RNA sequence: GGGAACGACUCGAGUAGAGUCGAAAAGAUAUGGAUGACUCUCACCCGCUGACCACGCGUGGUCGGAAACGACCACGUAUCAAGCGGUGAGAGGUCAUCCUAAGUCAAAAUCCCCGUUCGCGGGGAAGUAACUAGAUACGUUCGCGUAUCUAGUUACAAAAGAAACAACAACAACAAC
Reactivity to 2A3 in 0.01 (KOAc 150mM, MgCl2 10mM, bicine 150mM(pH8.5), 24C), signal-to-noise 6, nucleotides 027 to 126: g030a010u080a050u240g000g000a000u000g000a000c000u020c000u000c020a020c050c180c050g010c010u020g030a080c060c060a130c300g000c010g010u000g010g000u010c010g030g050a150a090a030c010g000a000c000c000a000c000g000u000a020u040c070a020a070g000c000g000g010u000g000a010g000a000g000g000u020c000a000u000c000c000u000a050a010g020u000c010a020a040a040a300u060c010c010c010c010g030u050u080c300g000c020g110g010g010g000a010a030
Reactivity to DMS in 0.01 (KOAc 150mM, MgCl2 10mM, bicine 150mM(pH8.5), 24C), signal-to-noise 7, nucleotides 027 to 126: g010a040u000a300u010g000g010a020u000g010a080c000u010c000u000c000a020c080c020c130g050c010u000g010a180c300c300a060c240g000c020g020u000g010g000u000c010g020g000a060a100a220c020g010a010c000c000a010c000g020u000a030u000c100a110a040g030c010g000g020u000g000a010g010a010g020g010u000c000a000u000c000c000u000a030a090g010u000c030a100a110a160a200u000c000c000c000c000g020u000u010c190g020c020g010g010g000g010a010a040